Chemical mapping of a 207-nucleotide RNA with 2A3 and DMS.
[RMDB]
RNA sequence: GGGAACGACUCGAGUAGAGUCGAAAAAAGAAACCACUCAUCAGGUCAAAGAAUGUAAAUGUAGACAAUCUGAGGUUGGAAGCUGGGUUGGAAAUGAUGCACCGUACUUGGUUAAAUCGCUGUCACUGAAUAUCUGACUACCCUGUGGCACUGAGGACUGAGCAUACCAUUUCGAUGGUAUGCUCAGAAAAGAAACAACAACAACAAC
Reactivity to 2A3 in 0.01 (KOAc 150mM, MgCl2 10mM, bicine 150mM(pH8.5), 24C), signal-to-noise 3, nucleotides 027 to 156: a000a000g100a010a030a010c010c000a020c020u040c010a120u040c010a040g090g070u090c090a070a030a020g070a080a070u100g040u160a090a140a010u160g060u060a080g020a070c020a040a030u050c060u030g020a020g040g020u030u070g080g000a040a000g020c050u040g010g020g010u060u030g010g000a040a110a010u080g010a090u050g040c040a020c020c060g080u110a080c060u020u050g030g010u070u050a020a160a040u080c030g030c090u010g020u030c000a010c060u010g070a090a020u090a060u130c040u040g040a030c020u060a080c010c010c000u000g000u020g020g000c030a020c040u050g030a000g010g010a000
Reactivity to DMS in 0.01 (KOAc 150mM, MgCl2 10mM, bicine 150mM(pH8.5), 24C), signal-to-noise 2, nucleotides 027 to 156: a080a110g000a120a060a050c030c000a120c090u000c020a110u000c020a060g050g010u020c050a150a050a110g010a140a090u010g000u000a050a070a050u000g000u000a100g010a110c050a050a080u000c060u000g020a060g000g030u000u000g010g010a070a110g030c060u000g020g010g020u010u010g000g000a080a080a070u000g010a150u000g000c060a050c040c010g010u010a050c110u000u000g030g000u000u000a040a100a060u000c040g000c060u000g020u010c000a080c030u020g000a050a050u000a080u000c070u010g030a090c110u010a120c030c030c040u030g010u000g030g030c050a060c040u000g020a060g020g010a260